[RMDB]
RNA sequence: GGGAACGACUCGAGUAGAGUCGAAAACCAUUCCUUAUACCUUGAGUAUUGCUGAAUUCAGGUUAGCGUGCAUGCUCUUGGCUAUUCUCAUAGUGAUUGUCAAAUUUGGAGUUACUUAUUCGUCAAUAAAACACUACCACGUUCGCGUGGUAGUGAACUGUCUAGUAUACUUCGGUAUACUAGACAGAAAAGAAACAACAACAACAAC
Reactivity to 2A3 in 0.01 (KOAc 150mM, MgCl2 10mM, bicine 150mM(pH8.5), 24C), signal-to-noise 5, nucleotides 027 to 156: c020c010a040u060u080c000c020u090u140a070u040a130c020c010u030u040g000a010g010u030a080u190u100g000c050u040g080a200a160u190u160c080a160g200g000u050u090a030g040c060g030u050g010c010a000u020g000c000u000c000u020u010g010g000c000u030a050u130u070c090u010c060a090u120a100g110u070g090a110u070u100g110u100c050a050a090a140u100u060u170g060g010a070g060u080u080a070c050u130u110a090u230u140c060g090u060c070a070a100u100a170a090a010a000c000a000c000u000a000c000c000a000c000g010u040u040c160g010c010g110u000g000g020u000a000g000u010g000a000a000
Reactivity to DMS in 0.01 (KOAc 150mM, MgCl2 10mM, bicine 150mM(pH8.5), 24C), signal-to-noise 3, nucleotides 027 to 156: c040c060a230u000u000c000c050u000u000a220u000a040c020c000u000u000g020a090g040u000a050u010u000g030c000u000g000a110a120u000u000c140a160g050g000u000u000a100g000c060g010u010g040c010a130u000g010c000u000c010u010u010g030g020c030u000a070u010u000c040u020c040a180u010a050g000u000g000a050u010u000g010u000c020a060a060a130u000u000u000g030g000a120g010u000u000a050c030u000u010a130u010u000c060g010u000c050a070a100u020a050a070a100a160c010a000c000u000a010c000c000a000c000g030u000u000c270g050c020g010u000g030g040u000a010g000u010g010a010a060
The record gives the reactivity of an RNA of 207 nucleotides to 2A3 and DMS. DMS (dimethyl sulfate) methylates the pairing face of unpaired adenines and cytosines. Reactivities are given for positions 27 through 156. DMS adducts were read by reverse transcription with MarathonRT. The 2A3 profile rests on 4,242 reads.